[RMDB]
RNA sequence: GGGAACGACUCGAGUAGAGUCGAAAAUAGCGCGUGGGGAGUGAAUCAUUUCGUGCCACUCCGACAACUGACUGGUGCGCAGAGUGAGUUUCUUUACCGAGAUGAAGCAUCCAAUGCUUACUUCAUAACGGGACGUAGUCUUCGGACUACGUCCCGUAAAAGAAACAACAACAACAAC
Reactivity to DMS in 0.01 (KOAc 150mM, MgCl2 10mM, bicine 150mM(pH8.5), 24C), signal-to-noise 1, nucleotides 027 to 126: u060a010g040c000g000c000g000u000g010g000g030g000a000g000u000g000a230a160u100c000a260u060u290u060c080g000u030g000c300c000a010c000u000c000c000g000a170c100a000a110c000u030g000a180c300u010g000g000u000g000c000g030c010a080g010a290g000u000g000a110g000u000u000u000c000u000u080u010a040c300c300g000a080g080a070u000g000a000a000g000c000a010u000c300c250a000a120u000g010c000u000u000a070c060u060u000c000a040u100a030
Chemical mapping of a 177-nucleotide RNA with DMS. DMS adducts were read by reverse transcription with MarathonRT. The DMS profile rests on 624 reads. DMS (dimethyl sulfate) methylates the pairing face of unpaired adenines and cytosines.